Chemical mapping of a 177-nucleotide RNA with DMS and 2A3.
The reactions ran in a buffer of 150 mM KOAc, 10 mM MgCl2 and 150 mM bicine (pH 8.5), at 24 C.
For DMS, 1,038 sequencing reads were counted.
DMS adducts were read by reverse transcription with MarathonRT.
[RMDB]
RNA sequence: GGGAACGACUCGAGUAGAGUCGAAAAGUAGAUGCCGAACUUCCGUAUGUCCACAGGCUCUGAGAGGAUGUUGGACGAAGCGUCGGCCACCAAAGGAAUAUCCCCUGUGUCGGGAAGAGAGGUGUACAGCGGGAUUAUUGUUCGCAAUAAUCCCGCUAAAAGAAACAACAACAACAAC
Reactivity to DMS in 0.01 (KOAc 150mM, MgCl2 10mM, bicine 150mM(pH8.5), 24C), signal-to-noise 2, nucleotides 027 to 126: g010u000a070g000a060u000g030c010c000g020a210a090c020u000u010c040c300g020u000a120u010g020u020c020c020a060c000a060g000g010c030u000c030u040g040a160g000a030g000g000a110u000g000u020u000g020g010a010c030g010a040a010g010c110g000u000c000g000g010c010c070a020c040c010a040a050a130g000g000a160a120u000a100u000c020c040c000c070u010g000u000g010u000c130g000g000g000a040a030g010a090g030a120g000g020u000g060u010a040c140
Reactivity to 2A3 in 0.01 (KOAc 150mM, MgCl2 10mM, bicine 150mM(pH8.5), 24C), signal-to-noise 2, nucleotides 027 to 126: g020u050a040g000a150u150g040c010c000g010a030a030c020u020u030c060c010g150u170a100u300g010u010c000c000a060c020a050g230g080c040u000c180u260g300a280g000a040g120g010a060u050g130u200u070g070g030a030c030g000a090a000g000c060g060u030c000g000g030c030c000a020c000c040a040a090a000g100g020a210a070u070a030u180c010c000c000c050u050g080u040g100u300c040g050g000g020a010a010g030a000g000a000g050g040u070g000u000a050c110